The record gives the reactivity of an RNA of 177 nucleotides to 2A3 and DMS. 2A3 adducts were read by reverse transcription with SuperScript II with manganese. For 2A3, 1,392 sequencing reads were counted. Values are in units of 0.01, from 0 to 300, in steps of 10.

RNA sequence: GGGAACGACUCGAGUAGAGUCGAAAAACUGUUGAUUCCUCACAGGGUUCAGAAUACCAGUACGUUAUCUUCUGUCAAACAGCAGAUACGGCACAUGCUAACAACAUUAACAGAUUUAAUGUUGCAACAUAGAGAUGGACUUCGGUCCAUCUCUAUGAAAAGAAACAACAACAACAAC
Reactivity to 2A3 in 0.01 (KOAc 150mM, MgCl2 10mM, bicine 150mM(pH8.5), 24C), signal-to-noise 2, nucleotides 027 to 126: a000c020u020g060u120u040g070a150u070u080c010c000u050c010a060c060a090g050g000g060u070u040c020a030g060a220a060u050a140c040c020a030g050u090a030c030g030u100u090a010u020c000u030u000c000u010g050u050c060a130a100a090c000a100g020c020a000g000a010u000a030c010g000g000c030a020c010a080u080g030c020u140a130a040c010a000a000c010a010u000u020a020a000c020a080g110a300u000u090u040a020a010u030g030u000u020g000c030a080a060
Reactivity to DMS in 0.01 (KOAc 150mM, MgCl2 10mM, bicine 150mM(pH8.5), 24C), signal-to-noise 3, nucleotides 027 to 126: a090c040u000g020u000u000g000a160u000u000c010c010u000c230a150c150a130g000g000g020u000u000c080a070g000a130a100u020a090c050c030a140g020u000a040c030g000u010u000a000u000c000u000u000c000u010g000u000c300a090a070a300c020a020g010c030a000g010a030u000a010c030g000g030c070a030c100a080u000g060c110u000a120a170c030a000a010c000a000u020u000a030a060c170a120g000a130u010u000u010a030a010u000g020u000u000g000c050a080a140